RNA sequence: GGGAACGACUCGAGUAGAGUCGAAAAUGCUGAGCUUUCGAGCUCAGCAGAGGCAAGCAAGCUGCGCAACGAGACAAGACGAGCAUAAGAUCGAGCAUGCUACAAUACGGCACUUCGGUGCCGUAAAUUCAUUUUAUGGGUUCGCCCAUAAAAUGAAAAAAGAAACAACAACAACAAC
Reactivity to DMS in 0.01 (KOAc 150mM, MgCl2 10mM, bicine 150mM(pH8.5), 24C), signal-to-noise 3, nucleotides 027 to 126: u000g020c000u000g000a020g020c010u000u000u010c200g020a020g020c010u000c000a000g020c000a010g000a080g000g010c070a070a080g000c060a050a070g000c030u010g010c050g030c050a050a080c080g000a030g000a070c080a050a090g000a100c090g000a100g000c020a060u000a050a090g010a070u010c080g010a120g010c070a060u000g020c060u010a080c150a070a110u000a010c010g010g000c000a020c000u000u010c150g030g010u000g000c000c000g010u000a000a020a080
Reactivity to 2A3 in 0.01 (KOAc 150mM, MgCl2 10mM, bicine 150mM(pH8.5), 24C), signal-to-noise 2, nucleotides 027 to 126: u040g000c000u000g010a010g000c000u010u070u170c180g070a010g000c000u000c010a000g000c000a000g000a000g030g000c060a010a070g000c020a020a030g030c010u090g020c030g000c060a040a110c050g050a020g010a060c050a110a010g080a070c060g010a000g030c020a020u030a140a090g050a140u090c020g000a020g020c030a010u050g000c000u060a050c030a040a080u050a060c010g000g000c000a000c000u030u040c150g080g000u010g000c020c000g000u010a000a000a020

Background: An RNA of 177 nucleotides, treated with DMS and 2A3 and read out base by base. Values are in units of 0.01, from 0 to 300, in steps of 10. Conditions: 150 mM KOAc, 10 mM MgCl2 and 150 mM bicine (pH 8.5), 24 C.